[RMDB]
Source: RMDB library M2PK50, as collected in RNAgym. This 177-nucleotide RNA was probed chemically with 2A3 and DMS.

RNA sequence: GGGAACGACUCGAGUAGAGUCGAAAACCGUUGCCGUUCGCGGCAACGGGAAGCAAGCAAGCAGCGCAAGGAGACAAGACGAUAAUGAGAUCGCGCAUGCUGAAAAGCCACGCUUCGGCGUGGCUAACUGUUCAUUGGGUUUCGACCCAAUGAACAGAAAAGAAACAACAACAACAAC
Reactivity to 2A3 in 0.01 (KOAc 150mM, MgCl2 10mM, bicine 150mM(pH8.5), 24C), signal-to-noise 1, nucleotides 027 to 126: c000c000g000u000u000g000c000c040g020u050u060c260g030c000g090g090c000a000a020c000g010g000g030a000a010g130c060a060a000g060c000a020a040g010c040a000g000c000g000c030a060a020g140g070a110g070a090c060a110a010g110a060c080g050a110u090a300a120u300g100a080g020a120u050c040g000c000g000c060a070u020g000c000u000g040a000a130a000a000g030c010c000a000c010g010c000u060u080c130g070g000c040g020u020g000g000c000u000a000a010
Reactivity to DMS in 0.01 (KOAc 150mM, MgCl2 10mM, bicine 150mM(pH8.5), 24C), signal-to-noise 2, nucleotides 027 to 126: c000c000g030u000u000g010c000c000g010u000u000c150g070c050g000g000c030a020a000c000g000g020g010a030a080g020c070a130a080g000c100a150a030g000c000a030g010c030g000c030a110a170g010g010a090g010a130c110a070a010g000a130c090g030a050u010a070a060u020g000a040g000a110u000c130g010c030g010c020a060u000g010c020u000g000a090a070a050a040g000c000c000a000c000g010c000u000u010c150g000g020c000g010u000g000g000c020u020a010a060

Record summary: Conditions: 150 mM KOAc, 10 mM MgCl2 and 150 mM bicine (pH 8.5), 24 C. For DMS, 1,107 sequencing reads were counted. As a SHAPE reagent, 2A3 marks flexible, mostly unpaired nucleotides at the ribose 2'-OH.